[RMDB]
RNA sequence: GGGAACGACUCGAGUAGAGUCGAAAAGACAAAACGUGGAUUUUCAUAUGCACGCUCUGUCACACGUUUUUCAUCAGGACGUUUUAAAAUAGGGUAUAGAAUUGAACUUGCAUUAGCUUCCAUUGCACUACGCCCCCGAAUUCGUUCGGGGGCGUAGAAAAGAAACAACAACAACAAC
Reactivity to 2A3 in 0.01 (KOAc 150mM, MgCl2 10mM, bicine 150mM(pH8.5), 24C), signal-to-noise 1, nucleotides 027 to 126: g110a020c000a000a000a060a000c110g040u000g150g060a070u000u050u050u050c070a070u170a060u200g100c140a020c000g060c000u020c000u000g010u030c030a100c000a000c020g000u020u000u000u060u120c050a030u020c030a000g050g000a000c000g000u000u000u020u130a030a050a080a080u250a060g000g090g060u300a100u010a170g170a010a120u000u110g000a040a060c000u000u000g000c080a030u120u120a000g060c040u010u000c000c000a000u000u110g060c000a000